[RMDB]
RNA sequence: GGGAACGACUCGAGUAGAGUCGAAAAUCGCAAGCCAAUCGGCAUCUGAGACUGGGCCACUGCGGUGAGGCGAUCGGAAGAUUGGUCCUUUCCAGUCGCCUAGCUAGGGCCAAUCACGGAGCGUCCCAUACUUCGCGGGCCCGCCCGUAGGCCGGGAAAUACCGUGGAUGUUCGCAUCCACGGUAUUAAAAGAAACAACAACAACAAC
Reactivity to 2A3 in 0.01 (KOAc 150mM, MgCl2 10mM, bicine 150mM(pH8.5), 24C), signal-to-noise 1, nucleotides 027 to 156: u070c010g010c050a060a000g010c000c030a000a070u150c060g020g010c020a070u000c090u120g110a100g050a130c250u300g000g000g000c040c020a130c190u170g020c030g040g020u040g030a060g000g000c040g000a020u000c010g050g080a110a070g000a110u000u050g000g000u090c000c000u030u050u000c000c020a090g120u170c040g050c080c100u060a030g000c040u020a000g000g050g000c030c030a020a000u000c010a070c070g040g000a060g050c000g010u070c000c010c010a010u050a080c040u100u140c020g000c020g180g000g010c030c010c000g010c000c010c000g010u020a050g140g000c000c000g040g030g030a020
Background:
The record gives the reactivity of an RNA of 207 nucleotides to 2A3. Conditions: 150 mM KOAc, 10 mM MgCl2 and 150 mM bicine (pH 8.5), 24 C. 2A3 adducts were read by reverse transcription with SuperScript II with manganese. Values cover nucleotides 27 to 156.